This 177-nucleotide RNA was probed chemically with DMS and 2A3.
RNA sequence: GGGAACGACUCGAGUAGAGUCGAAAAACAAGCUACCAUGCAGGUUUAGUAGGUAAAGAAUUUUUAGAAAAAUGGGCUGGCGUACCAACUGAAGUACACGUUGCAUCAGAGUUUGUCUACAACAUGCAAGAGGUGAAAUAUUCGUAUUUCACCUCUUAAAAGAAACAACAACAACAAC
Reactivity to DMS in 0.01 (KOAc 150mM, MgCl2 10mM, bicine 150mM(pH8.5), 24C), signal-to-noise 6, nucleotides 027 to 126: a070c090a090a070g020c060u010a070c090c140a050u010g010c040a050g000g000u010u010u020a070g000u010a040g000g000u010a060a080a120g010a060a040u000u020u010u030u040a100g000a040a040a020a050a060u020g000g000g000c030u000g000g010c040g030u020a030c060c030a080a070c080u030g010a040a060g010u010a050c110a050c100g010u030u000g000c020a040u000c060a070g000a100g010u000u000u000g000u000c040u000a060c090a050a070c110a040u020g000c230
Reactivity to 2A3 in 0.01 (KOAc 150mM, MgCl2 10mM, bicine 150mM(pH8.5), 24C), signal-to-noise 8, nucleotides 027 to 126: a000c040a030a000g040c010u060a070c020c020a020u070g010c030a020g020g030u050u120u150a040g030u050a020g040g050u080a080a110a070g120a090a130u090u100u080u150u200a160g130a060a070a050a030a040u080g010g020g000c040u040g060g030c030g030u030a050c000c020a090a070c030u070g030a060a010g040u030a020c070a000c090g110u090u040g000c010a030u040c010a020g030a010g080u010u030u050g010u000c000u040a050c030a080a030c020a070u110g020c020
Reactivities are rounded to 0.1 and cut off at 0 and 3.